[RMDB]
RNA sequence: GGGAACGACUCGAGUAGAGUCGAAAAGAAGCGUAAUCGCAAUGUAGCGGUUAGGGAUUGUGGUGAAAUAGAACCUGACAGAGCGAUCGGCAAUCAAGAAGCUACCGGCGGAAAACGCCUAUAGAAAGGGAUUUAUAUACUUCGGUAUAUAAAUCCCAAAAGAAACAACAACAACAAC
Reactivity to DMS in 0.01 (KOAc 150mM, MgCl2 10mM, bicine 150mM(pH8.5), 24C), signal-to-noise 4, nucleotides 027 to 126: g000a120a190g020c050g010u010a110a090u020c000g000c010a170a090u030g000u020a040g010c000g010g000u040u030a100g000g010g000a050u000u000g030u010g000g000u000g000a070a110a110u020a100g000a100a110c010c020u020g020a080c140a110g010a150g000c140g000a110u010c040g000g010c010a020a030u000c050a030a070g000a200a160g000c000u010a020c030c300g000g020c010g020g020a040a050a070a050c020g010c000c040u000a110u040a060g020a070a080a100
Reactivity to 2A3 in 0.01 (KOAc 150mM, MgCl2 10mM, bicine 150mM(pH8.5), 24C), signal-to-noise 3, nucleotides 027 to 126: g030a010a000g040c000g010u060a050a030u120c000g000c010a010a160u190g010u050a000g000c010g000g030u060u050a070g100g040g030a060u050u060g040u090g080g020u110g070a030a030a020u200a100g030a090a030c000c000u040g020a030c030a070g070a030g120c070g060a090u080c040g040g000c020a000a040u040c010a010a070g070a040a000g060c010u020a010c000c050g020g000c010g010g000a000a010a000a170c010g000c000c000u130a120u070a080g110a030a080a030